[RMDB]
RNA sequence: GGGAACGACUCGAGUAGAGUCGAAAAUAUAUGAUCAACCGAAUCAUACGGUUACAAGCUGUCUUAAAAAUAAUCACUGCAACCGGCAGAGCCUUGACUAUUCUGGCCCAGCAAGAAACUCAGAUGAGCUCCUUUAAUGUUUCGACAUUAAAGGAGCAAAAGAAACAACAACAACAAC
Reactivity to DMS in 0.01 (KOAc 150mM, MgCl2 10mM, bicine 150mM(pH8.5), 24C), signal-to-noise 1, nucleotides 027 to 126: u000a080u000a080u020g010a060u000c120a060a030c110c040g000a100a090u010c040a030u000a140c080g000g020u000u020a010c070a090a150g030c080u000g030u000c080u000u000a000a140a040a100a080u000a050a030u000c070a030c060u030g000c020a030a020c040c040g040g040c090a040g050a040g000c010c030u000u000g000a060c140u000a060u000u000c080u000g000g020c000c040c000a100g010c050a090a110g010a100a030a150c040u010c070a110g040a110u020g010a260
The record gives the reactivity of an RNA of 177 nucleotides to DMS. It was measured as part of the RMDB library OK2TRN. Values cover nucleotides 27 to 126.